[RMDB]
RNA sequence: GGGAACGACUCGAGUAGAGUCGAAAAGCGUUUACCGUGAGCAAGUUCAACGUGAAGUCAACGCCUCUGAUCAAGUUCUUCAAUCUCAAUUGAAGUGGCCCGUCGAGUUUAUCUACCUCGGCUUGCGCCCUGCUGCCAACGUCGCCGCUGGUAAUACCGGUAAGUAUACGUUCGCGUAUACUUACCGAAAAGAAACAACAACAACAAC
Reactivity to DMS in 0.01 (KOAc 150mM, MgCl2 10mM, bicine 150mM(pH8.5), 24C), signal-to-noise 1, nucleotides 027 to 156: g010c020g000u010u000u000a030c010c020g040u010g020a120g030c060a060a130g000u000u000c050a100a100c040g010u010g010a110a090g000u000c010a070a080c040g040c040c020u000c040u020g010a070u000c030a040a090g000u000u000c030u000u010c020a030a070u000c150u010c160a100a140u020u000g020a060a090g000u000g000g020c030c000c070g030u000c000g000a070g000u000u010u030a080u050c040u010a090c120c000u020c050g050g020c020u000u000g000c010g010c020c050c000u000g000c050u100g010c020c030a040a060c040g000u010c120g000c100c030g040c000u000g000g000u010a060a110u000a100c080
Reactivity to 2A3 in 0.01 (KOAc 150mM, MgCl2 10mM, bicine 150mM(pH8.5), 24C), signal-to-noise 4, nucleotides 027 to 156: g000c000g000u010u020u040a060c030c020g050u090g030a040g020c100a160a040g050u140u140c070a120a040c080g040u090g100a090a020g040u080c000a030a020c050g050c010c010u070c100u060g060a070u040c070a070a060g050u080u040c000u010u000c000a000a080u050c040u020c160a090a200u020u060g010a020a040g010u030g050g020c030c020c030g020u020c010g000a000g010u070u180u160a120u050c070u080a070c030c010u020c010g000g020c040u060u110g010c020g030c020c010c000u010g030c010u020g050c030c010a090a080c090g040u050c050g030c020c010g030c070u010g030g040u140a130a070u110a160c110